[RMDB]
This 177-nucleotide RNA was probed chemically with DMS and 2A3. The reactions ran in a buffer of 150 mM KOAc, 10 mM MgCl2 and 150 mM bicine (pH 8.5), at 24 C. Values are in units of 0.01, from 0 to 300, in steps of 10. For 2A3 the reverse transcriptase was SuperScript II with manganese.
RNA sequence: GGGAACGACUCGAGUAGAGUCGAAAAUUCCCUGGCAGCGCUGCAACGGAAUCCAGUGCCCCCCGGAGCGCCAGUUCGGGCGAGAGUUGCUUCGGCUUUUUCUUCGUGGAACGGCUCCGCGUGUACGCUUAUUUACAAGGUUCGCCUUGUAAAUAAGAAAAGAAACAACAACAACAAC
Reactivity to DMS in 0.01 (KOAc 150mM, MgCl2 10mM, bicine 150mM(pH8.5), 24C), signal-to-noise 6, nucleotides 027 to 126: u000u000c000c000c010u010g010g020c080a080g010c030g020c040u000g000c080a090a090c110g010g010a120a080u000c090c030a040g010u000g000c000c010c010c010c030c020g000g010a020g020c020g000c220c010a050g000u000u000c020g050g020g020c020g010a030g000a040g010u000u000g000c010u000u010c190g020g000c010u000u000u000u010u000c010u010u010c040g050u010g020g010a030a030c020g000g000c010u000c000c010g010c130g020u010g010u010a090c200g000
Reactivity to 2A3 in 0.01 (KOAc 150mM, MgCl2 10mM, bicine 150mM(pH8.5), 24C), signal-to-noise 2, nucleotides 027 to 126: u020u010c000c000c000u010g100g040c070a080g030c030g000c040u050g000c020a140a040c040g160g060a120a120u050c060c020a030g070u040g070c000c020c000c020c010c010g000g010a000g000c040g020c060c000a010g010u030u020c010g060g120g000c010g000a010g000a000g020u060u040g010c000u020u040c130g030g030c010u110u030u030u040u000c010u070u090c010g040u040g060g000a000a000c000g010g000c000u010c000c000g020c060g010u080g030u020a020c070g000